[RMDB]
RNA sequence: GGGAACGACUCGAGUAGAGUCGAAAACUCAGACGGCAGCUGAUCCUCUUCGGUCUCCGUGCAGAGCUCGUGAAGGCAGUGCCGACGAUGAGUCUGGAGAGGGCGGAGGCCCAAGUGAACAAAUGGGCAUGGUUACGGGUUUCGACCCGUAACCAUGAAAAGAAACAACAACAACAAC
Reactivity to DMS in 0.01 (KOAc 150mM, MgCl2 10mM, bicine 150mM(pH8.5), 24C), signal-to-noise 2, nucleotides 027 to 126: c010u000c010a080g020a150c160g000g000c010a040g010c010u000g000a090u000c010c000u000c010u000u020c050g020g030u000c000u000c020c050g000u000g030c000a050g010a300g000c000u000c050g060u000g000a080a120g000g000c030a080g000u000g010c030c040g030a110c060g010a140u010g010a020g060u000c000u000g000g010a020g000a020g010g030g010c010g010g020a060g000g000c000c000c070a020a060g000u000g000a140a170c100a050a070a090u010g000g000g010
Reactivity to 2A3 in 0.01 (KOAc 150mM, MgCl2 10mM, bicine 150mM(pH8.5), 24C), signal-to-noise 1, nucleotides 027 to 126: c010u000c060a020g050a100c040g030g000c070a040g000c060u060g050a290u050c000c000u030c000u010u000c000g040g000u000c000u000c000c000g030u020g000c020a070g020a040g070c010u040c090g180u160g260a110a080g070g060c070a060g020u010g090c070c010g000a000c000g040a060u230g000a000g030u020c020u050g000g000a050g010a000g000g000g000c030g000g000a000g020g050c000c010c010a100a000g090u120g160a060a040c030a030a140a040u150g070g060g040